[RMDB]
RNA sequence: GGGAACGACUCGAGUAGAGUCGAAAAUGAUUGAGCGUAGCACACACUCAGACUGUACGACAGUCUGACACACACCUACGCUAGUGCAACGUGUGUGUGAUAUCGAUGUAGCACGAAAAUGAAGUAACGUAGUAACGUUCUUCGGAACGUUACUACGAAAAGAAACAACAACAACAAC
Reactivity to DMS in 0.01 (KOAc 150mM, MgCl2 10mM, bicine 150mM(pH8.5), 24C), signal-to-noise 4, nucleotides 027 to 126: u020g000a170u000u000g020a130g000c030g010u010a080g010c040a060c060a060c020a060c180u000c000a000g010a010c010u000g020u020a180c300g010a100c030a000g020u000c000u000g010a030c040a040c050a050c040a030c170c060u000a060c070g020c030u000a050g030u000g000c060a080a070c130g000u000g000u000g020u000g010u000g000a150u000a060u010c070g000a100u000g020u010a080g010c000a010c040g000a050a050a060a090u000g010a080a080g000u020a060a150
Reactivity to 2A3 in 0.01 (KOAc 150mM, MgCl2 10mM, bicine 150mM(pH8.5), 24C), signal-to-noise 5, nucleotides 027 to 126: u260g030a070u090u170g050a030g050c010g000u020a020g000c100a000c010a010c010a010c050u030c010a000g010a020c000u020g040u140a130c160g150a040c220a000g010u000c000u000g000a000c000a000c000a000c000a000c020c020u100a030c070g020c020u030a050g060u070g080c030a060a030c060g010u010g010u020g000u010g010u020g090a050u040a040u150c080g000a040u050g020u080a030g020c020a020c050g060a050a060a020a090u210g020a080a030g080u120a120a030
Structure probing data (DMS and 2A3) for a 177-nucleotide construct. The DMS profile rests on 4,018 reads. Values cover nucleotides 27 to 126. Reactivities are rounded to 0.1 and cut off at 0 and 3. Source: RMDB library M2PK90, as collected in RNAgym.